[RMDB]
RNA sequence: GGGAACGACUCGAGUAGAGUCGAAAAUACCACUAUCAAAGAUAACUCUAGUCUUGUCUUCCAUAAAAACUGUUCGACAACAGAUGGUGGGGCCAUUCAGUGUAUAGGAAGCAGUGCCGCUGAAUUACGUAACCACAUCAUUCGUGAUGUGGUUACGAAAAGAAACAACAACAACAAC
Reactivity to DMS in 0.01 (KOAc 150mM, MgCl2 10mM, bicine 150mM(pH8.5), 24C), signal-to-noise 2, nucleotides 027 to 126: u020a100c090c040a080c110u010a080u010c090a210a130a120g000a070u000a090a070c070u000c060u000a060g030u000c040u000u000g010u010c000u000u000c030c000a070u030a100a040a080a050a080c090u000g010u000u000c090g010a110c160a090a120c070a040g010a070u000g010g020u000g000g000g010g050c060c030a040u000u000c030a040g020u010g020u000a020u000a080g010g000a060a050g020c070a020g020u000g000c130c080g020c080u000g010a080a060u010u010a080
Reactivity to 2A3 in 0.01 (KOAc 150mM, MgCl2 10mM, bicine 150mM(pH8.5), 24C), signal-to-noise 2, nucleotides 027 to 126: u120a020c010c050a000c070u160a100u180c070a170a060a000g080a100u110a140a070c050u020c020u060a050g130u040c000u050u050g000u060c030u060u020c010c020a100u210a070a150a030a020a000c030u040g070u060u060c070g080a050c050a100a000c000a020g010a080u000g000g040u020g000g010g030g050c050c000a010u020u060c020a010g050u020g020u100a040u070a200g080g050a020a050g000c070a050g000u020g090c030c020g060c020u030g060a040a040u130u050a050

Chemical mapping of a 177-nucleotide RNA with DMS and 2A3. It was measured as part of the RMDB library OK2TST. For DMS the reverse transcriptase was MarathonRT. The reactions ran in a buffer of 150 mM KOAc, 10 mM MgCl2 and 150 mM bicine (pH 8.5), at 24 C. The 2A3 profile rests on 1,340 reads.